[RMDB]
RNA sequence: GGGAACGACUCGAGUAGAGUCGAAAAAGCACUUCGGUGCUAUACUCGCGUACUACAAGACUUUUGACGUGCACAUCUACCCACCUCCGUCCCAAAUAGGACGGAGAGGAUGGAAGCACGAUAAGUCUUGUAUCGCUCGGCCGCAUUUCGAUGCGAAACAGCACAUCCUAUUCGUAGGAUGUGCUGUAAAAGAAACAACAACAACAAC
Reactivity to 2A3 in 0.01 (KOAc 150mM, MgCl2 10mM, bicine 150mM(pH8.5), 24C), signal-to-noise 5, nucleotides 027 to 156: a020g030c010a010c020u080u180c300g120g000u020g010c020u050a080u080a060c040u040c050g000c040g050u060a070c030u010a010c020a000a010g010a010c010u000u090u170u180g290a170c050g010u000g000c010a010c000a100u000c010u060a140c070c030c050a070c050c000u000c000c000g030u000c050c010c010a240a300a080u300a130g000g000a010c000g000g000a000g000a000g000g010a000u020g000g070a170a080g000c000a000c000g000a020u020a010a000g000u000c000u000u000g000u010a010u070c010g020c020u040c070g120g040c050c020g000c020a000u120u210u170c190g120a020u020g000c010g000a160a150
Reactivity to DMS in 0.01 (KOAc 150mM, MgCl2 10mM, bicine 150mM(pH8.5), 24C), signal-to-noise 2, nucleotides 027 to 156: a010g000c010a030c010u000u000c300g080g000u000g010c000u000a060u000a040c090u000c070g000c020g000u020a080c060u000a050c000a030a030g000a020c000u000u000u000u000g000a150c160g020u000g020c000a060c090a070u010c000u000a030c020c010c080a300c170c000u030c000c000g060u010c000c000c030a050a170a190u000a060g010g000a020c000g000g000a000g050a000g000g000a050u000g000g010a110a150g010c000a020c020g000a030u000a000a010g030u000c000u000u010g000u000a010u000c020g000c010u000c060g010g040c060c020g040c010a050u000u000u000c100g010a120u000g000c000g000a120a100
The record gives the reactivity of an RNA of 207 nucleotides to 2A3 and DMS. The 2A3 profile rests on 3,667 reads. DMS adducts were read by reverse transcription with MarathonRT.